[RMDB]
RNA sequence: GGGAACGACUCGAGUAGAGUCGAAAACGACCGCCUGACGGGUCGGACAUAGCGUCAGGAUCAUCCGUGGCAGUCACCACGGUAAUCAUGUGCCUGAUGAUGGUUUUCCAUCUUAAUCUGACUGAGUCGUAGCAGUCUACAGUACUAUGACAUUAGACAGUAUAGUAUAUUUCGAUAUACUAUACUGAAAAGAAACAACAACAACAAC
Reactivity to 2A3 in 0.01 (KOAc 150mM, MgCl2 10mM, bicine 150mM(pH8.5), 24C), signal-to-noise 9, nucleotides 027 to 156: c010g000a000c000c000g020c010c020u020g010a010c010g010g010g010u020c020g050g070a050c070a090u150a040g080c010g000u000c000a000g000g010a010u090c030a030u000c000c000g010u010g000g030c070a080g090u070c020a010c020c000a000c000g000g000u010a010a050u090c060a020u100g050u090g100c000c060u070g030a080u050g000a000u010g050g030u040u130u160u080c010c000a020u010c010u060u160a150a100u080c090u090g010a000c000u000g000a010g000u010c010g000u010a000g000c010a000g010u010c120u100a060c040a060g040u040a040c000u000a010u030g010a000c000a020u030u060a070g030a040
Reactivity to DMS in 0.01 (KOAc 150mM, MgCl2 10mM, bicine 150mM(pH8.5), 24C), signal-to-noise 3, nucleotides 027 to 156: c030g010a230c000c000g000c030c040u000g010a060c020g010g010g010u000c010g020g000a070c050a100u000a110g000c020g010u000c000a020g010g010a060u020c040a090u000c000c000g030u000g010g020c030a220g020u020c210a280c020c000a020c010g010g000u000a020a060u010c120a080u000g010u000g010c000c030u000g010a080u000g010a020u000g020g020u000u000u000u020c010c010a060u000c030u000u000a100a100u000c050u010g010a110c040u000g010a140g020u000c020g040u000a020g020c020a060g030u000c040u000a140c120a130g020u000a060c030u000a030u000g010a030c000a170u000u000a090g000a300
Conditions: 150 mM KOAc, 10 mM MgCl2 and 150 mM bicine (pH 8.5), 24 C. This 207-nucleotide RNA was probed chemically with 2A3 and DMS. For 2A3, 17,105 sequencing reads were counted. 2A3 adducts were read by reverse transcription with SuperScript II with manganese.